[RMDB]
The record gives the reactivity of an RNA of 177 nucleotides to 2A3 and DMS. For DMS the reverse transcriptase was MarathonRT. The data come from the RNA Mapping Database (RMDB), library TTRDES. The reactions ran in a buffer of 150 mM KOAc, 10 mM MgCl2 and 150 mM bicine (pH 8.5), at 24 C. The 2A3 profile rests on 2,181 reads.
RNA sequence: GGGAACGACUCGAGUAGAGUCGAAAAGAUAUGGAGUGGUGACUGCAACAGCACAGGAAUCGGAAACGAUUCUGUGACAUGCAGCACCACUCCUAAGUCAAAAGAACGGCGCCUUCGGGCGCCGUUCGUACAAUUGUUCGUUCGCGAACAAUUGUACAAAAGAAACAACAACAACAAC
Reactivity to 2A3 in 0.01 (KOAc 150mM, MgCl2 10mM, bicine 150mM(pH8.5), 24C), signal-to-noise 2, nucleotides 027 to 126: g000a000u000a000u060g000g030a000g000u020g020g020u060g080a300c000u000g000c190a300a060c110a300g040c020a010c000a020g090g220a110a140u020c000g000g000a010a010a010c000g000a000u020u000c000u000g000u010g000a020c050a160u300g000c010a000g000c000a000c000c000a000c000u000c000c000u000a000a000g000u010c000a000a020a040a170g040a010a000c020g090g000c150g050c120c080u130u300c300g200g050g000c000g060c060c000g010u000u000c000
Reactivity to DMS in 0.01 (KOAc 150mM, MgCl2 10mM, bicine 150mM(pH8.5), 24C), signal-to-noise 2, nucleotides 027 to 126: g010a030u000a020u010g000g000a030g060u000g000g010u000g000a220c010u020g050c010a150a080c170a080g000c010a030c000a030g000g000a020a030u000c010g010g000a030a010a030c000g010a010u000u000c010u000g000u010g000a020c010a300u000g030c000a000g000c000a000c000c000a000c010u000c020c010u000a000a030g020u000c000a100a090a140a180g010a030a030c020g010g070c010g120c020c020u000u020c270g030g040g110c060g060c030c010g000u000u000c000